[RMDB]
RNA sequence: GGGAACGACUCGAGUAGAGUCGAAAACCGGCAAGAGGGGCCGAAAGUGUGAAGGGAGAGACCGCUCCGAGAGUUGGGAGAAGAAAGAGAGCGAAUGUGUCCGGAGGGAACCCCCAAGCUUUCAACAUGAGAGGCGAGUUCGCUCGCCUCAAAAGAAACAACAACAACAAC
Reactivity to 2A3 in 0.01 (KOAc 150mM, MgCl2 10mM, bicine 150mM(pH8.5), 24C), signal-to-noise 2, nucleotides 027 to 129: c000c000g000g000c010a000a030g010a010g000g040g000g000c010c000g040a060a090a040g080u140g000u110g070a080a070g020g000g000a020g000a000g000a070c000c000g050c000u000c020c070g080a030g000a000g050u040u090g070g000g030a050g010a040a020g000a030a070a000g060a000g000a000g000c020g000a090a220u090g020u040g000u000c030c000g010g010a000g010g000g000a000a000c010c000c000c000c000a000a000g010c070u060u130u110c000a040a130c000a040u060g100a070
Reactivity to DMS in 0.01 (KOAc 150mM, MgCl2 10mM, bicine 150mM(pH8.5), 24C), signal-to-noise 2, nucleotides 027 to 129: c050c000g060g000c150a040a170g060a110g040g000g030g040c000c010g090a030a070a030g010u060g060u040g020a220a080g000g040g000a120g040a150g070a020c040c110g030c070u000c150c070g050a050g000a060g010u120u000g000g010g000a050g010a020a030g050a040a080a000g010a050g000a030g030c060g040a020a050u000g040u020g040u020c040c010g050g030a100g010g050g000a030a140c110c040c000c000c060a040a110g020c080u010u030u000c160a130a030c170a110u000g030a150